[RMDB]
RNA sequence: GGGAACGACUCGAGUAGAGUCGAAAAUAACAGCCACUUUCAUUAACCCACCUAUUUAGUCAUUAAAGAAAUGUUUUCAGUGUCUCCCAUGGGUCAGGCACUAUUCUAGAUCCUAAGACUUCAGCAAAAACAAAACAUACCCCUUGCUCUUGUUGAACGUCCUAAAUGGUUUCGACCAUUUAGGACGAAAAGAAACAACAACAACAAC
Reactivity to 2A3 in 0.01 (KOAc 150mM, MgCl2 10mM, bicine 150mM(pH8.5), 24C), signal-to-noise 1, nucleotides 027 to 156: u050a000a050c000a010g060c020c020a030c020u060u160u090c070a140u160u180a100a070c000c020c040a070c070c030u100a210u140u170u110a080g010u050c090a080u070u080a040a090a060g030a060a160a090u110g030u000u110u030u000c050a050g040u000g100u000c000u030c010c040c030a100u090g060g000g000u070c010a040g050g000c050a050c010u010a030u000u000c000u030a050g010a050u030c000c000u050a100a080g030a110c000u070u010c030a000g060c050a120a000a010a000a030c030a040a030a080a020c020a080u160a150c000c000c000c000u020u050g000c000u070c000u050u030g020u020u000g000a090a060